Structure probing data (2A3) for a 207-nucleotide construct. The reactions ran in a buffer of 150 mM KOAc, 10 mM MgCl2 and 150 mM bicine (pH 8.5), at 24 C. For 2A3 the reverse transcriptase was SuperScript II with manganese.

RNA sequence: GGGAACGACUCGAGUAGAGUCGAAAAAGAUCGAUUACGAUCGAUCAAUGAUGCCCCUCACCCACCUCUGAAGAUCCCAGGUGGGCGAGGGAACGGAGCACGGGAUCACGAGCAGUACGCUGCUGGAAAAAGAACUAGACCUUCGGGUCUAGUUCAACGACAGGUACAUCUUCGGAUGUACCUGUCGAAAAGAAACAACAACAACAAC
Reactivity to 2A3 in 0.01 (KOAc 150mM, MgCl2 10mM, bicine 150mM(pH8.5), 24C), signal-to-noise 1, nucleotides 027 to 156: a010g000a000u000c000g000a000u070u090a050c280g000a000u020c000g000a020u000c000a000a090u190g000a110u140g070c010c030c000c000u000c000a000c000c000c000a000c000c000u100c080u070g100a080a080g010a030u000c000c000c000a000g020g000u000g000g000g010c010g000a000g010g010g000a020a040c140g030g100a060g080c170a070c150g000g000g000a010u010c030a030c040g040a010g000c000a000g000u060a010c280g020c070u000g000c010u030g080g050a130a050a010a060a070g000a000a000c020u020a010g000a000c020c010u040u210c300g080g000g010u000c000u000a000g000u020u030c000a000a000